[RMDB]
RNA sequence: GGGAACGACUCGAGUAGAGUCGAAAAGCGCCAGGAGAGCUUCCCGGAGUCGACCUUCCUGCUGGCUGCUCUGUGACCGCUUCCCGGCUCUGCCCUCUUGGCCGAAGUGCCCGCUGCCGGGCGCGGGUCUGCAUUAAGUUUUCGAACUUAAUGCAGAAAAAGAAACAACAACAACAAC
Reactivity to 2A3 in 0.01 (KOAc 150mM, MgCl2 10mM, bicine 150mM(pH8.5), 24C), signal-to-noise 4, nucleotides 027 to 126: g030c020g000c010c010a020g020g020a040g010a010g020c020u050u020c000c010c000g010g010a010g020u040c030g030a160c010c020u070u080c010c010u030g050c020u030g030g010c040u020g010c010u010c020u050g120u070g060a070c020c010g020c030u110u090c010c010c000g000g000c020u060c040u060g010c010c000c000u020c020u020u050g020g000c010c010g060a080a020g050u040g070c010c000c010g040c100u130g060c060c010g000g000g000c010g000c000g010g000g010
Reactivity to DMS in 0.01 (KOAc 150mM, MgCl2 10mM, bicine 150mM(pH8.5), 24C), signal-to-noise 9, nucleotides 027 to 126: g020c100g010c000c020a020g020g010a040g010a090g000c040u010u000c030c010c000g020g000a040g000u010c010g010a110c070c040u010u020c050c000u000g020c050u010g010g000c020u010g010c020u010c030u000g000u010g000a100c060c020g010c050u000u000c010c000c010g010g000c010u010c080u010g010c000c020c010u000c020u000u000g010g010c020c030g010a100a130g010u010g000c010c010c010g010c170u020g010c060c030g000g010g000c300g000c010g000g000g010